Structure probing data (DMS and 2A3) for a 177-nucleotide construct. The DMS profile rests on 2,579 reads. For DMS the reverse transcriptase was MarathonRT. The reactions ran in a buffer of 150 mM KOAc, 10 mM MgCl2 and 150 mM bicine (pH 8.5), at 24 C.

RNA sequence: GGGAACGACUCGAGUAGAGUCGAAAAAUUGCUGAGCAGCUAAAUAACCAAUUGGGUAUUUUUGUUCAAGUGGGCAAUGAUAUGAAUUACACUGCAUUUGGCUUCUACCGAAAUGAUUGCCGCGGUACGAACGAUGGAUAUUCGUAUCCAUCGUUCGAAAAGAAACAACAACAACAAC
Reactivity to DMS in 0.01 (KOAc 150mM, MgCl2 10mM, bicine 150mM(pH8.5), 24C), signal-to-noise 3, nucleotides 027 to 126: a050u010u010g030c020u010g010a050g010c030a010g020c270u010a010a050a040u000a050a050c020c020a250a160u010u020g000g010g000u000a000u000u000u010u000u000g010u000u000c030a150a080g020u000g020g010g020c030a010a010u000g010a150u010a070u000g000a100a080u000u020a090c060a070c010u010g000c020a130u000u000u000g000g000c030u010u010c060u000a050c010c020g000a040a040a080u020g010a080u000u000g010c010c040g030c030g000g010u000a090
Reactivity to 2A3 in 0.01 (KOAc 150mM, MgCl2 10mM, bicine 150mM(pH8.5), 24C), signal-to-noise 2, nucleotides 027 to 126: a000u030u100g000c040u030g000a010g020c000a010g000c050u130a060a050a060u050a060a050c010c040a050a300u200u120g050g000g010u020a030u020u060u000u040u010g020u000u040c080a130a070g040u120g020g110g000c000a040a030u060g040a030u050a040u210g120a090a030u110u040a030c040a020c050u070g000c040a090u030u030u110g030g000c020u070u000c010u020a040c000c000g060a050a050a040u280g050a160u090u080g000c000c020g020c020g000g000u050a060